[RMDB]
RNA sequence: GGGAACGACUCGAGUAGAGUCGAAAAGGUCAUCCUUCACAGGAUCGUGUGGAAGUCCUGCUCGGGGCUGAAGCAUUAAAACCAUUCGAGCUAGUCAAUGCGUGGCGUGUCUCUCCGCAGCGUGUUGUGUAUGAGAGUGGAUUCGUCCACUCUCAAACUCCAGUAAUGAAUUCGUUCAUUACUGGAGAAAAGAAACAACAACAACAAC
Reactivity to 2A3 in 0.01 (KOAc 150mM, MgCl2 10mM, bicine 150mM(pH8.5), 24C), signal-to-noise 5, nucleotides 027 to 156: g080g020u100c030a020u050c030c000u110u130c090a090c030a080g020g010a030u040c040g010u000g000u030g020g040a020a010g010u010c010c010u040g060c070u050c060g000g000g010g000c010u000g020a020a000g020c000a010u030u140a020a020a030a080c060c010a030u080u110c030g010a010g010c040u090a020g170u110c020a020a030u050g010c010g030u020g030g000c020g030u060g080u040c060u010c010u020c140c000g030c030a020g010c030g010u020g000u010u010g020u020g040u050a130u130g000a000g000a000g000u010g010g010a020u040u050c160g060u020c030c000a000c000u000c000u000c000a000a010a000
Reactivity to DMS in 0.01 (KOAc 150mM, MgCl2 10mM, bicine 150mM(pH8.5), 24C), signal-to-noise 3, nucleotides 027 to 156: g030g030u000c050a090u000c020c020u010u000c190a190c140a150g010g000a020u000c070g050u020g040u010g010g010a300a060g000u000c000c020u000g000c140u010c160g020g000g000g040c010u050g000a300a250g000c040a060u000u010a080a120a050a080c010c000a150u000u000c050g020a110g020c040u010a060g010u010c040a030a020u000g000c010g070u000g020g040c050g060u020g000u010c070u000c050u010c100c020g030c010a050g010c010g020u000g000u010u010g010u010g000u000a160u000g020a010g030a050g000u000g020g010a040u000u000c300g020u000c000c000a000c010u000c010u000c000a000a010a100
Record summary
An RNA of 207 nucleotides, treated with 2A3 and DMS and read out base by base. Values cover nucleotides 27 to 156. It was measured as part of the RMDB library M2RFPK. The reactions ran in a buffer of 150 mM KOAc, 10 mM MgCl2 and 150 mM bicine (pH 8.5), at 24 C. For 2A3 the reverse transcriptase was SuperScript II with manganese.